[RMDB]
Description: This 177-nucleotide RNA was probed chemically with DMS. Reactivities are rounded to 0.1 and cut off at 0 and 3. For DMS, 1,471 sequencing reads were counted.
RNA sequence: GGGAACGACUCGAGUAGAGUCGAAAAGCGGGGCAAUGCGGCGCCGCUGCGCGUGCGAGGAGGGCGACGCAGCAGCACGUCCAUUAGCGCGGUGCUGGGCAGUUGCGGCGAUCCGGAAGCCACGGCAUGAAUGGAGCAAGUUCGCUUGCUCCAUUCAAAAAGAAACAACAACAACAAC
Reactivity to DMS in 0.01 (KOAc 150mM, MgCl2 10mM, bicine 150mM(pH8.5), 24C), signal-to-noise 1, nucleotides 027 to 126: g000c040g000g020g040g010c020a100a140u010g000c050g000g000c010g030c010c040g000c010u000g000c040g020c070g030u040g000c060g010a130g000g010a170g010g010g000c020g020a080c050g000c010a060g020c070a070g010c010a070c020g020u000c040c040a160u000u030a090g000c070g010c050g000g020u010g010c020u000g020g000g020c080a080g010u000u010g020c000g030g010c030g000a090u000c010c020g020g010a160a230g000c000c010a040c000g040g000c100a170